[RMDB]
RNA sequence: GGGAACGACUCGAGUAGAGUCGAAAAACUCAAAGCCAAGCGCCGCGAGCUGCUCAUAUGCAUCGGAGAUUUCCACCCUCACGGCACCGGCCGGAGGCCACUCCGACACCUCCGCCGGCGGCUGCACUCCAUGGAUAGCAUUCGUGCUAUCCAUGGAAAAAGAAACAACAACAACAAC
Reactivity to DMS in 0.01 (KOAc 150mM, MgCl2 10mM, bicine 150mM(pH8.5), 24C), signal-to-noise 2, nucleotides 027 to 126: a020c010u010c060a060a080a100g010c030c000a180a200g000c200g000c040c070g010c220g020a020g000c090u030g040c070u010c130a070u030a040u010g010c000a070u000c070g000g040a060g000a100u020u000u000c030c040a110c080c090c000u030c050a050c030g000g040c000a250c060c010g000g020c090c070g050g020a040g000g040c140c030a070c050u000c070c020g000a140c210a170c020c000u000c000c000g020c020c000g000g050c100g000g010c000u020g000c120a080c070
Notes:
Chemical mapping of a 177-nucleotide RNA with DMS. The RNA was probed in 150 mM KOAc, 10 mM MgCl2 and 150 mM bicine (pH 8.5) at 24 C. The data come from the RNA Mapping Database (RMDB), library OK1LIB. In probing experiments dimethyl sulfate is read out at A N1 and C N3, which are open when not base-paired.